[RMDB]
RNA sequence: GGGAACGACUCGAGUAGAGUCGAAAACGGGUCGGCCACUCUCUUCCAAUGCAAUCAUUAAGUUAUCAAUCAUUUGUUGACGUCGAAUUAAAUUACUUGGAUGUUUAAUUCUUUGCCAAACGCUUGCUAAAACUUCAUCUUCAGUGGCAUUAUAUGCACCAUACUUUCAGUUCGCUGAAAGUAUGGUAAAAGAAACAACAACAACAAC
Reactivity to 2A3 in 0.01 (KOAc 150mM, MgCl2 10mM, bicine 150mM(pH8.5), 24C), signal-to-noise 5, nucleotides 027 to 156: c040g000g040g010u030c030g060g030c010c010a030c020u030c000u000c000u090u010c020c010a050a080u100g040c030a050a100u040c030a090u090u120a140a030g030u070u110a090u120c040a080a020u020c030a080u030u050u170g030u010u040g040a050c030g030u070c040g020a000a000u020u020a020a010a030u080u100a110c100u110u080g140g040a080u090g080u050u020u010a010a030u030u000c000u060u080u050g010c010c010a050a070a020c040g010c060u040u060g010c010u050a040a060a050a130c020u080u060c030a060u030c040u130u050c030a040g020u040g040g000c000a010u090u090a090u050a030u100g040c030
Reactivity to DMS in 0.01 (KOAc 150mM, MgCl2 10mM, bicine 150mM(pH8.5), 24C), signal-to-noise 2, nucleotides 027 to 156: c030g000g020g040u000c030g020g020c020c020a080c030u000c020u000c060u030u000c000c030a090a120u000g000c040a060a120u010c020a060u000u000a040a090g020u010u000a110u010c040a040a100u010c060a080u000u000u000g030u000u000g010a020c050g020u020c100g000a030a060u010u000a030a050a070u010u000a160c100u010u000g020g030a110u010g020u010u000u000a030a060u010u000c020u000u000u000g020c010c010a030a040a100c100g000c120u000u000g000c030u020a070a120a040a090c030u000u000c030a060u010c040u000u000c040a050g040u000g000g030c020a070u000u010a080u000a110u000g040c120